[RMDB]
RNA sequence: GGGAACGACUCGAGUAGAGUCGAAAAUAAGCGUGUCGGAGGGUUGUCUUCGUCAUCAACACACACAGUUUAUAAUAACUGGCAAAUCAAACAAUAAUUUCGCAGUAGCUGCCUAAUCGCACUCUGCAUCGCCUAACAGCAUUUCCUAUAUGCUGUUGUUAUGUUGAUGGUUCGCCAUCAACAUAACAAAAGAAACAACAACAACAAC
Reactivity to 2A3 in 0.01 (KOAc 150mM, MgCl2 10mM, bicine 150mM(pH8.5), 24C), signal-to-noise 4, nucleotides 027 to 156: u170a050a030g040c030g000u060g030u070c000g000g020a000g020g040g060u260u040g040u090c000u020u000c000g150u020c010a010u050c000a020a070c030a000c000a000c000a000c000a030g010u010u020u070a290u100a250a110u170a020a020c020u000g070g000c040a010a070a090u160c050a080a080a210c060a070a070u120a120a150u110u200u240c080g000c010a020g030u240a000g030c110u020g010c020c030u100a100a050u110c060g020c010a010c010u000c010u010g010c000a020u110c070g020c020c010u040a020a010c000a000g020c000a000u030u060u130c020c070u100a040u030a000u220g000c000u010g010u040u000
Reactivity to DMS in 0.01 (KOAc 150mM, MgCl2 10mM, bicine 150mM(pH8.5), 24C), signal-to-noise 1, nucleotides 027 to 156: u000a080a030g000c020g020u000g000u000c040g000g000a110g010g000g060u030u000g010u000c060u000u010c180g030u000c070a170u000c070a000a040c000a100c030a030c070a070c010a040g000u000u000u000a130u010a240a070u000a050a070c040u010g020g010c060a050a060a100u010c030a050a080a070c090a100a090u030a120a170u000u020u000c160g000c020a090g060u000a060g030c190u000g040c030c000u010a100a160u010c050g020c000a040c010u000c010u000g020c010a150u000c060g010c030c050u000a040a070c030a010g020c000a050u000u000u000c120c100u000a100u010a030u000g000c000u020g010u030u010
Source: RMDB library ARCHII, as collected in RNAgym. This 207-nucleotide RNA was probed chemically with 2A3 and DMS. 2A3 adducts were read by reverse transcription with SuperScript II with manganese. Values cover nucleotides 27 to 156. For 2A3, 1,884 sequencing reads were counted.